[RMDB]
RNA sequence: GGGAACGACUCGAGUAGAGUCGAAAACGGUCGAGUUGGACGAUGUCGACGUAGUCCCGCCAGCGGGUGCUGGUGAUGCCGCGUUCGAGGAUGGUCACUCCCUUCUCGGCGAUGAUGGUCUCGGGCGGCAAUCAUGUUAGUUCGCUAACAUGAUUGCAAAAGAAACAACAACAACAAC
Reactivity to DMS in 0.01 (KOAc 150mM, MgCl2 10mM, bicine 150mM(pH8.5), 24C), signal-to-noise 4, nucleotides 027 to 126: c110g020g020u000c020g010a160g000u010u010g000g010a070c140g000a090u000g010u000c020g010a060c040g010u000a190g000u000c040c050c010g000c010c000a010g010c020g010g030g020u010g010c020u000g000g000u000g000a120u000g010c020c020g010c010g000u000u010c020g010a040g010g000a030u000g000g000u000c100a090c170u010c050c020c030u000u000c090u010c090g000g000c080g000a050u000g000a080u010g010g010u000c020u000c020g010g000g030c060g010
Reactivity to 2A3 in 0.01 (KOAc 150mM, MgCl2 10mM, bicine 150mM(pH8.5), 24C), signal-to-noise 4, nucleotides 027 to 126: c050g050g100u040c030g000a040g060u060u070g150g050a010c060g050a080u150g060u180c050g010a030c030g010u040a020g030u010c010c010c000g010c000c000a020g030c060g110g290g170u300g000c020u020g000g030u020g010a020u080g020c010c020g030c040g020u040u150c010g020a010g090g020a050u110g080g020u040c010a050c110u160c020c000c040u020u020c080u030c030g010g010c040g050a020u110g020a030u110g010g040u040c020u000c000g050g020g000c000g050
This 177-nucleotide RNA was probed chemically with DMS and 2A3. Reactivities are given for positions 27 through 126. For 2A3, 4,478 sequencing reads were counted.